RNA sequence: GGGAACGACUCGAGUAGAGUCGAAAAUCGGCUCGAGCAUGGGUACCCUCGGGCCUCAGCUCGGUACCAUGAUGGGCACUCUGGUCGAAGCGGUGGCGGCUGCCAUCCCGGCCAUCCUCGACGCUGGAGGUCAAACACACUUCGGUGUGUUUGACCUAAAAGAAACAACAACAACAAC
Reactivity to 2A3 in 0.01 (KOAc 150mM, MgCl2 10mM, bicine 150mM(pH8.5), 24C), signal-to-noise 6, nucleotides 027 to 126: u090c010g000g000c000u000c010g030a020g040c070a090u130g060g050g020u100a070c010c020c030u030c050g010g010g000c000c040u040c040a030g010c020u040c040g040g010u110a260c000c010a050u140g040a040u080g040g020g000c030a010c040u040c030u050g020g000u010c010g030a160a040g010c070g070g010u010g010g010c040g080g070c100u150g040c020c010a010u010c020c010c000g020g000c000c000a030u040c000c000u010c010g010a030c090g010c040u020g050g070
Reactivity to DMS in 0.01 (KOAc 150mM, MgCl2 10mM, bicine 150mM(pH8.5), 24C), signal-to-noise 8, nucleotides 027 to 126: u010c060g010g010c010u000c010g010a040g020c200a070u010g010g000g010u000a050c020c050c110u010c090g000g000g010c130c070u000c070a070g000c090u000c120g010g010u000a080c030c030a080u000g010a070u010g020g000g000c040a050c040u000c040u000g010g010u000c010g010a080a140g010c170g020g020u000g000g010c010g020g020c200u010g000c040c020a030u000c020c020c010g000g000c010c010a040u000c070c010u000c020g010a050c150g010c050u000g000g020

The record gives the reactivity of an RNA of 177 nucleotides to 2A3 and DMS. The reactions ran in a buffer of 150 mM KOAc, 10 mM MgCl2 and 150 mM bicine (pH 8.5), at 24 C. For 2A3, 17,646 sequencing reads were counted. In probing experiments dimethyl sulfate is read out at A N1 and C N3, which are open when not base-paired. 2A3 adducts were read by reverse transcription with SuperScript II with manganese.